[RMDB]
RNA sequence: GGGAACGACUCGAGUAGAGUCGAAAAUGACAACCGUGUGAGGCCAACAUCGAAGAUGCGUACCAAGCUGCGUUUCUACCUGUGUGGGUAGGGGCGGCUUAGCGAAUUAGGGCGUUCUGCCCCAGUGGCACCAUUACCCUAUGCAAAGUCUGCAUCAGGAAUUUUAUGGGUUCGCCCAUAAAAUUCCAAAAGAAACAACAACAACAAC
Reactivity to 2A3 in 0.01 (KOAc 150mM, MgCl2 10mM, bicine 150mM(pH8.5), 24C), signal-to-noise 1, nucleotides 027 to 156: u160g040a000c010a040a100c030c020g070u010g070u080g040a140g000g070c040c000a040a000c010a200u160c050g050a030a030g070a040u040g020c020g010u070a070c100c020a070a000g010c000u040g020c000g060u000u120u000c000u000a010c000c010u140g040u120g190u300g240g000g000u000a000g000g000g000g000c010g000g000c080u010u010a020g010c000g020a050a010u080u070a080g010g000g030c040g070u140u050c080u100g010c000c000c000c000a080g050u280g040g000c010a000c030c020a030u000u120a040c000c000c000u030a020u070g010c040a010a150a000g040u000c090u090g000c000a000u060c070a060